Notes: This 177-nucleotide RNA was probed chemically with 2A3 and DMS. DMS adducts were read by reverse transcription with MarathonRT. For 2A3, 793 sequencing reads were counted.
[RMDB]
RNA sequence: GGGAACGACUCGAGUAGAGUCGAAAAGCCUGGCCAAGGUCGGUGUCAACGGGCUGACGCAGCAGCUGGCCCGCGAGCUGGGCGGAAUGAAGAUAAGGAUCAAUGCGAUCGCACCCGGACCGAUCGACUGUUAGGGCUUGUUCGCAAGCCCUAACAGAAAAGAAACAACAACAACAAC
Reactivity to 2A3 in 0.01 (KOAc 150mM, MgCl2 10mM, bicine 150mM(pH8.5), 24C), signal-to-noise 1, nucleotides 027 to 126: g010c000c010u030g010g080c020c000a070a020g100g000u040c040g000g080u050g080u140c120a130a070c030g030g020g040c000u000g040a070c100g030c070a200g000c050a000g040c030u050g150g030c000c020c010g010c090g000a050g000c030u050g000g000g000c080g000g020a080a030u200g060a100a070g050a120u240a190a120g060g000a010u020c110a170a090u180g070c040g020a040u050c050g020c070a070c030c030c070g000g010a030c010c000g000a030u010c020g020a070
Reactivity to DMS in 0.01 (KOAc 150mM, MgCl2 10mM, bicine 150mM(pH8.5), 24C), signal-to-noise 1, nucleotides 027 to 126: g000c040c000u000g010g030c040c130a140a080g030g000u000c020g020g020u020g000u000c090a100a120c090g000g030g040c100u000g000a040c100g020c090a130g010c020a060g010c020u000g000g010c030c020c010g010c170g010a060g030c030u020g000g040g030c000g000g000a130a120u010g050a090a070g020a150u000a030a100g010g010a090u000c010a130a050u000g040c130g010a030u000c040g020c150a150c030c010c030g000g000a040c220c010g020a040u000c080g010a150
Background
It was measured as part of the RMDB library OK2TRN. For 2A3 the reverse transcriptase was SuperScript II with manganese. High DMS reactivity at an A or C suggests that its Watson-Crick edge is free. Reactivities are given for positions 27 through 126. For DMS, 709 sequencing reads were counted.